RNA sequence: GGGAACGACUCGAGUAGAGUCGAAAAUGAAAUCAAAAUAAGAGAGGUAAUGUAGGAGAAUAGAAUACAUUGGAAUUGGUCCUAUUGUCUCAAAAUGACCGUAAUUACCACCACCAAAAUAAAAAAAGAGCUAAUACUAGUUCGCUAGUAUUAGCUCAAAAGAAACAACAACAACAAC
Reactivity to DMS in 0.01 (KOAc 150mM, MgCl2 10mM, bicine 150mM(pH8.5), 24C), signal-to-noise 1, nucleotides 027 to 126: u030g000a070a100a120u000c050a050a070a150a050u020a180a140g000a070g030a110g010g010u000a000a020u010g000u020a230g000g000a040g000a050a030u000a050g000a110a040u020a080c010a020u000u000g010g000a060a240u000u000g000g000u000c070c060u000a040u000u000g000u000c030u010c020a050a040a070a110u000g000a070c040c060g020u010a200a090u000u000a040c040c000a100c100c070a040c060c050a060a090a020a120u050a030a020a050a090a010a100a110
Reactivity to 2A3 in 0.01 (KOAc 150mM, MgCl2 10mM, bicine 150mM(pH8.5), 24C), signal-to-noise 1, nucleotides 027 to 126: u090g040a080a020a090u120c060a070a040a020a180u130a260a000g070a030g010a040g070g010u070a040a000u050g020u090a040g050g010a060g020a080a000u040a080g030a000a040u060a120c110a040u070u110g030g120a070a020u130u210g080g110u100c010c040u020a050u080u200g040u040c030u010c110a070a150a050a070u050g030a010c000c000g000u030a010a010u030u040a030c030c000a000c010c010a030c010c000a040a070a030a100u190a090a100a070a000a020a020a080